Conditions: 150 mM KOAc, 10 mM MgCl2 and 150 mM bicine (pH 8.5), 24 C. An RNA of 177 nucleotides, treated with DMS and 2A3 and read out base by base.

RNA sequence: GGGAACGACUCGAGUAGAGUCGAAAAGAGUAAAUAGAGGAGUCAGGGUUCGCACCCGCUCCGCGAACCUAGGGUAACACUGACUAUCGAGCGGAAGAGAGAGCAGACGAAGAUACGUCUGCAUAGACGCGCAGUGCAUAUUCGUAUGCACUGCGCGAAAAGAAACAACAACAACAAC
Reactivity to DMS in 0.01 (KOAc 150mM, MgCl2 10mM, bicine 150mM(pH8.5), 24C), signal-to-noise 2, nucleotides 027 to 126: g010a140g040u000a040a020a090u000a110g010a070g000g000a020g000u000c040a260g020g000g000u000u000c030g000c050a100c040c040c050g030c000u000c000c160g030c040g000a100a090c020c060u030a250g000g000g020u000a300a000c120a160c030u000g000a080c120u000a110u020c010g000a060g000c010g010g050a180a020g010a280g000a060g040a100g000c000a000g000a010c000g000a150a050g060a160u010a010c030g010u020c000u020g040c060a010u020a080g000a280
Reactivity to 2A3 in 0.01 (KOAc 150mM, MgCl2 10mM, bicine 150mM(pH8.5), 24C), signal-to-noise 2, nucleotides 027 to 126: g090a040g120u160a000a110a020u260a120g030a100g130g000a010g000u000c030a040g000g000g060u000u000c000g010c010a100c030c000c010g000c000u040c000c010g010c000g000a000a000c110c000u030a010g000g130g170u100a060a000c010a010c010u100g030a010c050u030a160u240c220g010a010g000c010g000g000a200a000g010a000g060a000g020a050g060c000a000g000a000c000g000a100a000g040a230u140a070c050g000u040c000u000g000c000a000u040a000g060a000
The data come from the RNA Mapping Database (RMDB), library OK1LIB.